This 177-nucleotide RNA was probed chemically with 2A3 and DMS. The DMS profile rests on 1,520 reads. The 2A3 profile rests on 1,795 reads. The reactions ran in a buffer of 150 mM KOAc, 10 mM MgCl2 and 150 mM bicine (pH 8.5), at 24 C. It was measured as part of the RMDB library OK2TRN.

RNA sequence: GGGAACGACUCGAGUAGAGUCGAAAAGUCCAGGAGCGGCAGCUUCCUGGAUCAGCUAGCGCCCGGCAUCACCCGCCAGGACAGCACCGCUUCAUCAUCUCAGACAGGCAAGCCUCAUCACCUUGUCAUCAGUAUCACCUUUCGAGGUGAUACUGAUAAAAGAAACAACAACAACAAC
Reactivity to 2A3 in 0.01 (KOAc 150mM, MgCl2 10mM, bicine 150mM(pH8.5), 24C), signal-to-noise 1, nucleotides 027 to 126: g050u020c030c020a000g020g010a020g000c020g170g040c100a050g040c040u130u040c020c010u000g010g000a030u020c010a000g010c010u090a040g060c010g060c080c010c000g020g000c010a020u070c040a030c020c030c030g040c020c040a000g010g020a010c010a070g020c010a040c040c000g040c000u010u020c000a100u010c010a030u030c040u010c040a050g010a210c010a040g000g000c030a030a020g030c040c000u020c010a080u050c010a000c000c000u000u050g030u070c030
Reactivity to DMS in 0.01 (KOAc 150mM, MgCl2 10mM, bicine 150mM(pH8.5), 24C), signal-to-noise 2, nucleotides 027 to 126: g020u000c010c050a030g000g010a030g020c010g030g060c270a100g010c010u010u000c000c000u000g000g000a020u010c080a050g020c060u010a080g000c060g020c050c030c030g000g000c020a100u010c060a080c100c050c060g000c080c030a050g040g020a020c100a070g010c040a180c040c030g020c010u000u000c040a070u000c060a070u010c040u010c070a130g000a100c110a080g010g020c020a030a030g000c010c000u050c110a020u020c080a110c160c030u000u010g010u010c050